[RMDB]
RNA sequence: GGGAACGACUCGAGUAGAGUCGAAAAUCGCCGUCUCGCAAACGGGCACUGGCUUCAGGAGAGGAUGUUCCAUGGCCGUAAGCGCAGGCACACCACAGUGCCUGCUAUCACGGCAUUAUCGCCAGCGGUCGUAUGUAGAGUUCGCUCUACAUACGACAAAAGAAACAACAACAACAAC
Reactivity to 2A3 in 0.01 (KOAc 150mM, MgCl2 10mM, bicine 150mM(pH8.5), 24C), signal-to-noise 2, nucleotides 027 to 126: u070c020g020c060c010g040u020c030u030c040g100c090a090a030a030c020g010g030g000c020a020c080u050g020g000c000u110u070c090a060g050g040a050g030a030g120g070a130u090g080u040u030c020c000a040u100g100g000c000c000g000u010a030a040g020c020g000c040a000g010g090c000a010c000a010c050c040a110c070a080g000u010g000c000c010u010g010c000u000a000u020c020a010c000g010g030c010a000u060u070a040u030c080g040c020c020a020g030c030g080
Reactivity to DMS in 0.01 (KOAc 150mM, MgCl2 10mM, bicine 150mM(pH8.5), 24C), signal-to-noise 2, nucleotides 027 to 126: u010c100g010c010c010g010u010c020u000c140g000c160a070a230a050c060g000g030g020c080a050c050u010g000g010c040u000u010c120a080g000g030a160g010a050g020g020a070u010g030u000u000c000c010a190u020g010g010c030c000g010u010a030a090g020c110g000c000a010g000g010c000a020c000a170c140c230a110c220a080g030u000g000c010c000u000g000c010u000a020u000c080a010c030g000g010c010a130u000u000a050u000c130g010c020c030a090g010c090g010